[RMDB]
Source: RMDB library OK3TST, as collected in RNAgym. The record gives the reactivity of an RNA of 207 nucleotides to DMS and 2A3. Reactivities are given for positions 27 through 156. For DMS, 3,962 sequencing reads were counted. For DMS the reverse transcriptase was MarathonRT.

RNA sequence: GGGAACGACUCGAGUAGAGUCGAAAACAAUGGAUUCAUGUUAAGUAUUUUUUGGCAAGAACAUUUCAUUGGUGAACUUGAUGUGGCAUCCCUCCAGGAGGUACAUCAUGUCAGGAUGUACCCACUAUUAGUGAUACUGAGUUUGAUCCCUCAGUUACUAUGGUCAGUAGUUCGCUACUGACCAUAGAAAAGAAACAACAACAACAAC
Reactivity to DMS in 0.01 (KOAc 150mM, MgCl2 10mM, bicine 150mM(pH8.5), 24C), signal-to-noise 2, nucleotides 027 to 156: c060a050a100u010g010g040a090u000u000c020a050u000g030u000u020a060a090g030u000a030u000u000u000u000u000u000g020g090c000a090a090g000a090a110c080a050u000u000u000c070a090u010u000g000g020u000g030a040a110c050u000u000g010a030u010g050u010g010g020c040a100u020c010c010c010u000c040c060a110g020g010a080g020g000u000a020c010a010u000c000a060u020g030u000c280a220g000g010a030u010g000u010a020c010c000c010a060c040u000a090u000u000a090g010u000g010a190u000a080c010u000g000a090g000u010u000u000g030a180u000c200c140c020u000c020a020g000u010u010a130
Reactivity to 2A3 in 0.01 (KOAc 150mM, MgCl2 10mM, bicine 150mM(pH8.5), 24C), signal-to-noise 4, nucleotides 027 to 156: c020a010a090u100g030g010a040u070u060c040a040u100g020u050u090a070a070g040u050a290u120u120u050u020u050u120g100g000c090a100a020g040a150a080c060a090u050u160u170c060a080u110u080g060g010u090g070a030a030c020u030u050g030a020u060g060u030g020g000c020a050u050c030c020c010u030c010c020a050g100g000a050g000g010u000a000c000a010u010c030a040u170g140u170c070a020g180g000a000u000g000u010a000c000c020c000a030c000u100a150u190u130a080g070u010g080a000u040a090c000u000g000a000g030u050u150u120g050a020u040c000c010c030u020c010a000g020u000u010a010